[RMDB]
RNA sequence: GGGAACGACUCGAGUAGAGUCGAAAAUCGGAGAUGACGGCCAAAUCGGCGAGCACAAUGUUGAUGGUGGACAACGCAACUGGCGUCAAGGCGCUGGUGGCCGCCAUCGAGCGCGAGCCCGGACGCGUACACUGCUGUACUUCGGUACAGCAGUGUAAAAAGAAACAACAACAACAAC
Reactivity to DMS in 0.01 (KOAc 150mM, MgCl2 10mM, bicine 150mM(pH8.5), 24C), signal-to-noise 3, nucleotides 027 to 126: u020c040g020g010a260g010a020u010g000a040c020g020g010c030c000a080a120a100u020c100g020g000c010g020a150g010c040a060c130a070a090u010g010u000u000g000a090u000g010g010u020g010g010a150c090a080a090c130g010c120a090a070c010u010g010g000c040g010u000c110a110a130g020g000c000g010c020u010g020g030u000g010g010c010c000g000c010c000a000u000c020g050a080g000c030g000c020g000a200g020c000c000c020g010g010a090c040g010c020g020
Reactivity to 2A3 in 0.01 (KOAc 150mM, MgCl2 10mM, bicine 150mM(pH8.5), 24C), signal-to-noise 2, nucleotides 027 to 126: u090c000g100g040a110g020a070u050g000a030c040g040g000c050c000a050a090a150u120c030g030g000c030g000a010g020c030a030c010a130a200u170g040u100u080g100a090u070g040g110u020g030g040a040c070a260a030c160g010c060a040a050c040u040g030g000c000g020u040c050a040a110g140g000c000g010c000u020g010g000u040g020g000c010c000g000c010c000a000u000c000g000a020g000c000g000c000g000a060g030c000c000c000g000g000a020c050g010c000g000

Chemical mapping of a 177-nucleotide RNA with DMS and 2A3. For DMS, 2,272 sequencing reads were counted. The 2A3 profile rests on 2,948 reads. Source: RMDB library OK2TRN, as collected in RNAgym. Values are in units of 0.01, from 0 to 300, in steps of 10.